[RMDB]
RNA sequence: GGGAACGACUCGAGUAGAGUCGAAAACGCUGAUCUGCGACAUCACCGAGGUGGGGCAGCGUUAUCGUCUUGCCAAAGGGGGCAAUGGCGGCUUUGGCAACCUGCAUUUCACCACCUCCACCAAUCAACCACUACUAUGAUUCGUCAUAGUAGUGGUAAAAGAAACAACAACAACAAC
Reactivity to 2A3 in 0.01 (KOAc 150mM, MgCl2 10mM, bicine 150mM(pH8.5), 24C), signal-to-noise 9, nucleotides 027 to 126: c020g000c040u070g060a180u080c060u210g040c020g080a060c030a100u100c050a040c080c060g010a020g000g010u010g000g000g040g000c010a010g000c030g050u010u020a070u090c010g030u000c020u040u090g000c010c000a100a120a140g170g030g020g000g000c010a040a050u100g040g000c030g000g020c030u130u120u150g070g020c010a020a020c010c000u010g010c030a070u090u130u200c080a070c020c000a000c000c000u020c000c000a040c010c010a040a090u130c030a030
Reactivity to DMS in 0.01 (KOAc 150mM, MgCl2 10mM, bicine 150mM(pH8.5), 24C), signal-to-noise 9, nucleotides 027 to 126: c050g020c040u000g010a080u010c100u000g010c070g010a090c140a080u010c100a090c140c100g010a040g010g020u010g010g010g000g010c010a020g020c160g000u000u000a060u010c030g010u000c020u000u000g010c000c010a080a100a140g010g010g020g010g000c040a050a030u000g020g010c020g020g010c180u000u000u010g010g010c050a080a040c050c010u000g010c030a170u000u000u010c160a160c000c010a050c020c000u000c010c110a090c080c080a070a060u010c160a150